[RMDB]
RNA sequence: GGGAACGACUCGAGUAGAGUCGAAAAGCUUUGACGGGUCUUGACAAAUACGUGUAGCUACACGAGUCUGGAGUAAUGGGCAAAGGGGCGGCGUUCGACGAAUGCGCUUGCUACACCACCCGGCGGGCACUAGACGUUGUUUCGACAACGUCUAGUGAAAAGAAACAACAACAACAAC
Reactivity to 2A3 in 0.01 (KOAc 150mM, MgCl2 10mM, bicine 150mM(pH8.5), 24C), signal-to-noise 2, nucleotides 027 to 126: g000c030u000u100u260g030a020c000g020g000g000u020c020u020u120g020a030c040a020a190a070u210a140c030g000u000g030u060a030g090c100u120a020c010a000c020g030a020g010u000c000u030g030g010a050g010u110a120a090u080g000g020g000c070a080a110a080g040g010g010g000c030g020g000c010g020u040u130c060g090a140c090g050a140a020u070g000c030g000c000u020u200g030c000u050a030c010a030c010c000a020c000c010c000g000g000c030g000g010g000
Reactivity to DMS in 0.01 (KOAc 150mM, MgCl2 10mM, bicine 150mM(pH8.5), 24C), signal-to-noise 5, nucleotides 027 to 126: g010c030u000u000u020g030a060c040g000g020g010u000c050u000u000g000a060c100a070a100a150u010a100c100g010u000g010u000a090g010c110u000a080c040a050c030g000a210g010u010c010u010g010g010a110g010u010a060a060u000g000g000g000c060a050a100a140g000g010g000g000c040g030g010c020g020u000u000c050g000a120c150g010a060a060u000g010c040g000c040u000u010g020c030u010a050c120a090c020c080a090c010c010c000g010g000c030g000g000g000